[RMDB]
RNA sequence: GGGAACGACUCGAGUAGAGUCGAAAAAUAAAUAGCGUAAUGGUCAUUGGGAGUGUACGCUAAGUGUGUGUUGUAUACCUAACGUCCAAUUGAACACACACACAGUUGGACCUAAUGUCCAAAAAAACAAGCUAAUCUACUUCGGUAGAUUAGCUUGAAAAGAAACAACAACAACAAC
Reactivity to DMS in 0.01 (KOAc 150mM, MgCl2 10mM, bicine 150mM(pH8.5), 24C), signal-to-noise 2, nucleotides 027 to 126: a070u000a030a040a200u010a010g000c000g050u000a030a090u000g010g000u000c020a090u000u000g000g010g020a210g010u010g020u000a020c050g010c000u000a040a150g000u000g000u010g020u010g000u000u000g010u000a110u000a110c130c040u010a040a120c130g010u010c070c060a040a100u040u000g010a080a040c050a000c040a000c010a010c020a060c070a090g000u020u000g000g030a090c000c040u000a040a060u010g000u000c010c010a000a000a030a080a070a110a060
Reactivity to 2A3 in 0.01 (KOAc 150mM, MgCl2 10mM, bicine 150mM(pH8.5), 24C), signal-to-noise 2, nucleotides 027 to 126: a000u150a020a070a040u110a000g000c020g020u060a070a070u080g050g070u060c030a030u030u060g100g000g000a110g170u100g050u080a020c020g000c050u020a140a140g000u010g000u020g000u010g000u000u120g100u120a070u080a090c010c040u070a160a060c050g120u120c080c030a030a030u060u120g070a050a010c000a000c000a000c010a010c000a000c000a030g090u160u120g100g040a040c000c020u020a050a020u090g010u000c000c000a110a000a000a040a030a000a000